[RMDB]
RNA sequence: GGGAACGACUCGAGUAGAGUCGAAAAGAUAUGGACAGCGAAGAACGGUCCAACUUUGAUCUUGGGUCUAGAUCUCGGAAACGAGAUCUAGACCCAAGGGAGUUGUGACCGGGAGCUGUCCUAAGUCCAAGUCUGAAAGGUUCGCCUUUCAGACUUGAAAAGAAACAACAACAACAAC
Reactivity to DMS in 0.01 (KOAc 150mM, MgCl2 10mM, bicine 150mM(pH8.5), 24C), signal-to-noise 1, nucleotides 027 to 126: g000a070u000a300u000g010g000a000c010a010g020c020g020a130a250g000a190a200c010g000g010u000c000c000a010a000c000u000u010u010g010a060u030c000u000u010g010g010g000u010c010u000a000g020a020u010c000u010c000g010g010a150a120a300c000g020a050g020a010u000c000u000a010g020a010c000c010c000a000a010g020g000g000a010g020u000u000g010u010g010a000c010c000g000g000g010a090g010c000u000g010u000c000c010u000a000a090g020u010c050